This 207-nucleotide RNA was probed chemically with 2A3. For 2A3 the reverse transcriptase was SuperScript II with manganese. The 2A3 profile rests on 606 reads. It was measured as part of the RMDB library OK3TST.

RNA sequence: GGGAACGACUCGAGUAGAGUCGAAAAGCGGUGUUCUGCAACAAGUCGGGGAUCGUGUUCUACAUAUUUGGCGGCAUUAUCCAGUAUCUGCCUAUUGAUCUUCAUUUCGUUUUCAAUUCUGGCUAUUUCAAAAUAAAAUCCCGAUGAUAGACCUCCAAGCAAGUAUAUCCUUCGGGAUAUACUUGCUAAAAGAAACAACAACAACAAC
Reactivity to 2A3 in 0.01 (KOAc 150mM, MgCl2 10mM, bicine 150mM(pH8.5), 24C), signal-to-noise 2, nucleotides 027 to 156: g030c010g000g040u020g080u100u050c020u060g050c010a100a030c030a160a040g050u080c000g000g000g000g040a000u040c010g020u050g010u170u000c070u060a060c010a050u140a110u220u130u050g090g000c040g000g030c000a020u020u060a020u070c010c020a010g020u050a100u050c040u070g060c010c000u060a050u030u040g020a020u040c050u090u040c110a070u100u190u180c090g020u040u030u100u040c020a040a040u100u020c050u070g060g000c020u000a090u040u180u100c130a120a110a050a010u090a060a130a010a030u050c000c000c000g000a030u030g020a030u010a070g040a080c020c000u010c000c050a010